Chemical mapping of a 177-nucleotide RNA with 2A3 and DMS. Conditions: 150 mM KOAc, 10 mM MgCl2 and 150 mM bicine (pH 8.5), 24 C. For 2A3, 975 sequencing reads were counted.

RNA sequence: GGGAACGACUCGAGUAGAGUCGAAAAUUAAGCUGGCUAUGUACGCGUAAACCCUCGCCUAUCACUUGCGCCACCGACAUUCGAGGAUUAAGCGCAGAAUAUGGGUCUUGAAACACCACCUGCAUUAGAAAAUUAGCACUUUCGAGUGCUAAUUUUCAAAAGAAACAACAACAACAAC
Reactivity to 2A3 in 0.01 (KOAc 150mM, MgCl2 10mM, bicine 150mM(pH8.5), 24C), signal-to-noise 1, nucleotides 027 to 126: u090u030a020a060g010c020u010g090g000c000u070a050u190g020u070a070c040g000c020g090u030a050a080a060c000c000c000u000c000g010c010c000u020a070u090c040a040c060u050u100g000c010g020c050c000a070c000c000g100a060c040a110u160u180c090g030a010g040g000a020u040u190a060a040g000c000g020c010a000g000a050a010u170a090u100g020g030g000u000c000u000u100g020a080a070a010c010a020c000c000a020c010c030u000g000c020a060u010u070a090
Reactivity to DMS in 0.01 (KOAc 150mM, MgCl2 10mM, bicine 150mM(pH8.5), 24C), signal-to-noise 2, nucleotides 027 to 126: u010u010a100a100g040c000u000g030g010c060u000a130u000g000u010a050c120g000c060g000u000a030a110a110c050c010c000u000c070g010c060c050u000a100u010c120a140c120u040u030g020c060g040c020c080a060c050c040g010a080c100a090u010u010c050g020a120g000g000a080u020u010a080a130g010c020g030c050a060g010a090a050u020a080u010g000g010g010u000c040u000u000g000a130a110a080c150a050c020c020a080c030c000u000g000c040a060u000u000a110